[RMDB]
RNA sequence: GGGAACGACUCGAGUAGAGUCGAAAACCCAUGCCGACCCGAAGAGGAAAGGAGGACACGGACGACAAACCGUGAGAUCUACUGCCCUUUAUUGUUGGGUGCACCCUGGGACCCAGUAAUACCCGGGACAGAUAUCUAGGUUCGCCUAGAUAUCUGUAAAAGAAACAACAACAACAAC
Reactivity to 2A3 in 0.01 (KOAc 150mM, MgCl2 10mM, bicine 150mM(pH8.5), 24C), signal-to-noise 2, nucleotides 027 to 126: c020c000c020a030u090g000c030c070g090a080c020c010c010g050a030a020g070a040g050g000a170a000a000g030g020a020g030g000a010c010a000c020g020g040a050c040g030a030c150a070a110a020c030c010g000u000g030a020g010a100u060c010u040a050c020u060g000c000c010c000u060u120u130a140u110u230g100u060u080g010g010g000u020g010c040a120c000c000c030u080g030g030g000a030c000c020c000a000g050u060a020a080u070a190c040c000c000g000g000g000
Reactivity to DMS in 0.01 (KOAc 150mM, MgCl2 10mM, bicine 150mM(pH8.5), 24C), signal-to-noise 3, nucleotides 027 to 126: c020c010c020a150u000g020c040c070g000a100c030c020c020g000a070a110g000a040g020g000a070a230a030g000g010a140g020g000a100c030a010c000g020g020a080c090g030a200c300a080a080a070c010c020g030u000g010a070g010a100u000c010u010a110c040u000g010c300c000c010u000u000u000a080u020u000g000u020u000g010g010g000u000g000c060a100c040c010c020u010g030g000g000a080c000c000c000a100g000u010a020a030u000a090c020c020c000g000g010g010